[RMDB]
RNA sequence: GGGAACGACUCGAGUAGAGUCGAAAAUAGACAAGUUAUUUAACGUUUCUGUUGCACGUUGCUUAUCUUGAGCUAGUUUUUGAUCACCAUGUAAAUUGUUUUUAGCAUCAGUCACUGCCUGUGUCGCAAUUAGGUUCGAAUUCGUUCGAACCUAAUUAAAAGAAACAACAACAACAAC
Reactivity to 2A3 in 0.01 (KOAc 150mM, MgCl2 10mM, bicine 150mM(pH8.5), 24C), signal-to-noise 3, nucleotides 027 to 126: u090a000g030a030c050a060a000g040u050u020a050u100u080u050a040a010c000g010u000u110u020c110u120g150u130u090g020c060a000c040g020u010u020g000c020u090u050a090u060c010u030u040g020a050g050c030u010a070g050u040u010u000u050u160g060a060u040c010a010c140c040a010u030g060u180a050a110a170u170u070g050u060u140u040u050u080a000g040c000a010u060c010a030g040u000c040a030c090u040g010c000c000u040g010u030g020u060c050g040c070
Reactivity to DMS in 0.01 (KOAc 150mM, MgCl2 10mM, bicine 150mM(pH8.5), 24C), signal-to-noise 7, nucleotides 027 to 126: u000a040g010a070c060a050a050g000u000u000a030u000u000u000a030a060c040g000u000u000u010c060u000g020u010u010g020c200a030c030g010u000u000g010c030u000u000a030u000c020u000u010g010a120g000c010u000a030g010u000u000u000u000u000g010a070u000c070a120c040c030a060u000g000u000a040a050a110u010u010g010u000u000u010u000u010a070g010c030a040u000c050a050g000u000c050a060c080u000g010c050c030u000g010u000g000u000c090g010c110